Structure probing data (DMS and 2A3) for a 177-nucleotide construct. Conditions: 150 mM KOAc, 10 mM MgCl2 and 150 mM bicine (pH 8.5), 24 C. Source: RMDB library OK1LIB, as collected in RNAgym. Reactivities are given for positions 27 through 126.

[RMDB]
RNA sequence: GGGAACGACUCGAGUAGAGUCGAAAAUGUGGAGGGAAAACACUACAUCCUCAAGACUAGAAGCCAUAAAAAUCCAAAUCCUCAGUAAACUUCGCCUGGAAACAGCUCCUAACAUCAGCAAAGAUGCUCUACAAUUCGGUUUCGACCGAAUUGUAGAAAAAGAAACAACAACAACAAC
Reactivity to DMS in 0.01 (KOAc 150mM, MgCl2 10mM, bicine 150mM(pH8.5), 24C), signal-to-noise 2, nucleotides 027 to 126: u050g010u020g010g010a050g000g040g000a080a140a170a080c190a030c040u000a120c150a050u000c030c000u000c050a120a140g000a080c020u000a120g000a110a070g020c040c110a050u020a020a100a110a080a080u010c020c050a030a110a130u000c020c000u010c040a080g020u030a030a120a100c110u000u000c040g000c030c020u000g000g000a070a050a040c020a030g000c040u010c000c050u010a070a160c100a010u000c020a010g010c070a050a090a060g000a010u030g020c190
Reactivity to 2A3 in 0.01 (KOAc 150mM, MgCl2 10mM, bicine 150mM(pH8.5), 24C), signal-to-noise 4, nucleotides 027 to 126: u190g030u070g020g040a100g060g020g020a010a060a170a000c040a030c040u170a030c010a080u060c000c000u030c060a070a030g030a020c010u050a010g050a150a000g070c020c000a040u170a110a090a030a020a020u020c030c020a040a030a110u030c030c010u020c020a010g020u080a040a060a020c010u040u020c060g010c010c030u010g030g000a030a100a010c020a060g020c000u010c020c000u020a040a040c010a040u040c010a000g070c030a070a090a100g050a050u070g010c040